Source information:
Chemical mapping of a 177-nucleotide RNA with DMS and 2A3. The reactions ran in a buffer of 150 mM KOAc, 10 mM MgCl2 and 150 mM bicine (pH 8.5), at 24 C. It was measured as part of the RMDB library OK2TST. DMS adducts were read by reverse transcription with MarathonRT.
RNA sequence: GGGAACGACUCGAGUAGAGUCGAAAAUUCAUCGGCGGCGAUGUUAGUUAAUGCGAUACCCAUGAUACUGCUGAUCACCUUAUCCGGCCUGACGAUCGUGGCAGGUUGGAUGCCCGACGUGAAGCCAGACCAGUAAAUCCUUCGGGAUUUACUGGUCAAAAGAAACAACAACAACAAC
Reactivity to DMS in 0.01 (KOAc 150mM, MgCl2 10mM, bicine 150mM(pH8.5), 24C), signal-to-noise 1, nucleotides 027 to 126: u020u000c050a040u000c050g030g020c030g010g020c010g000a040u010g000u000u000a050g030u000u030a100a080u010g030c070g030a130u010a090c120c050c060a170u000g000a110u000a110c070u010g020c020u000g000a060u000c090a060c070c040u010u000a050u020c070c050g020g000c000c020u000g000a030c010g000a110u000c180g000u010g020g000c030a020g010g000u000u000g000g000a000u000g010c030c010c010g000a020c060g000u000g000a050a120g000c000c050a090
Reactivity to 2A3 in 0.01 (KOAc 150mM, MgCl2 10mM, bicine 150mM(pH8.5), 24C), signal-to-noise 1, nucleotides 027 to 126: u030u040c000a030u000c000g160g030c030g000g050c020g030a020u080g040u090u050a030g020u020u090a130a070u060g070c010g050a030u080a100c000c000c000a020u060g050a060u070a140c060u030g040c000u020g040a080u060c000a040c060c030u090u070a030u020c020c000g000g000c000c000u040g010a010c040g080a160u130c090g000u090g070g000c020a010g000g000u040u070g040g000a010u010g000c000c000c010g050a060c020g030u040g030a090a020g090c020c010a000

Annotation: For 2A3, 994 sequencing reads were counted.